[RMDB]
RNA sequence: GGGAACGACUCGAGUAGAGUCGAAAAUGGUGCUAAGUGUCGAUGGGCUUGGCCUUCUUAUAUAAGUAUAUCCCAUCUUUAGCUUUUUAUUGAGGAUUGUCACUUAAGCUAACAUGUAAUUUAAAACUUAUAAAUGCUUUAUACAUUUUAAAGUGUACCCACUGCAUUAUUUCGAUAAUGCAGUGGGAAAAGAAACAACAACAACAAC
Reactivity to 2A3 in 0.01 (KOAc 150mM, MgCl2 10mM, bicine 150mM(pH8.5), 24C), signal-to-noise 2, nucleotides 027 to 156: u050g060g030u090g000c000u000a000a000g030u010g100u160c050g000a030u040g040g000g000c000u040u020g050g000c000c000u040u070c070u130u200a140u020a000u010a200a050g050u010a020u000a020u200c030c020c000a020u090c000u000u020u030a020g000c000u000u140u060u070u160a160u140u140g020a050g000g000a130u060u120g130u070c020a050c050u040u040a070a020g000c010u030a010a010c030a080u080g040u190a100a080u160u130u110a050a140a030a030c030u160u080a080u100a210a060a070u000g000c000u010u180u180a190u130a060c020a130u130u130u050u050a070a100a030g030u040g050u050a060